[RMDB]
RNA sequence: GGGAACGACUCGAGUAGAGUCGAAAAAGUGAGUAUGGUUCGUUACGACGAGCCAUACUCACAACGGUUUUCCUAAAUCGUCGUGAGACGGACCUUGGAAAACCUAGUAUUUAAAUAACUAGGUCAAAAAACGGGUGGAGCUUCGGCUCCACCCGAACAGUUACGAUUACUUCGGUAAUCGUAACUGAAAAGAAACAACAACAACAAC
Reactivity to 2A3 in 0.01 (KOAc 150mM, MgCl2 10mM, bicine 150mM(pH8.5), 24C), signal-to-noise 2, nucleotides 027 to 156: a000g000u000g000a010g000u000a000u000g000g000u000u000c010g000u010u050a060c180g030a000c000g000a100g040c000c000a000u000a000c010u000c000a010c000a000a000c010g010g000u000u000u000u000c000c000u000a020a010a010u020c010g010u000c000g040u040g170a110g010a010c000g010g000a000c000c000u020u060g000g020a010a010a000a000c000c000u000a000g010u000a030u060u100u090a120a160a080u150a100a000c080u040a010g000g010u020c030a070a040a040a180a000a070c020g000g020g000u000g010g010a000g050c000u090u140c280g100g000c000u010c020c010a000c000c000c000g000a000a000